[RMDB]
RNA sequence: GGGAACGACUCGAGUAGAGUCGAAAAGAUAUGGACGUCACCAUCGAUCUACACAUCGGAAACGAUGUAAGUAGGGAGGGACGUCCUAAGUCAAACCAGUACCUCCAGUUCGCUGGAGGUACUGGAACCGUAAUAACAACUUCGGUUGUUAUUACGGAAAAGAAACAACAACAACAAC
Reactivity to 2A3 in 0.01 (KOAc 150mM, MgCl2 10mM, bicine 150mM(pH8.5), 24C), signal-to-noise 6, nucleotides 027 to 126: g020a020u050a040u100g000g010a020c010g020u010c040a300c300c000a210u300c040g040a050u050c000u010a000c030a000c000a010u010c000g030g010a040a050a040c010g000a000u010g010u020a090a120g000u000a010g040g040g010a030g000g000g000a000c000g000u000c000c000u000a010a000g020u000c020a010a060a110c000c000a000g000u000a000c000c000u000c000c000a000g010u090u110c210g170c130u000g000g000a000g010g000u000a000c000u000g000g000a000a010
Reactivity to DMS in 0.01 (KOAc 150mM, MgCl2 10mM, bicine 150mM(pH8.5), 24C), signal-to-noise 5, nucleotides 027 to 126: g000a020u000a300u000g010g010a020c010g010u000c000a150c020c000a290u010c140g020a070u010c000u010a000c010a080c000a000u000c000g000g000a120a060a200c000g010a010u000g010u000a020a040g010u000a010g000g010g000a040g010g000g000a010c010g000u000c000c000u000a000a070g000u000c040a120a110a160c000c010a010g000u000a000c000c000u010c000c000a010g010u000u010c220g010c000u000g000g010a020g000g000u000a000c000u000g010g000a010a030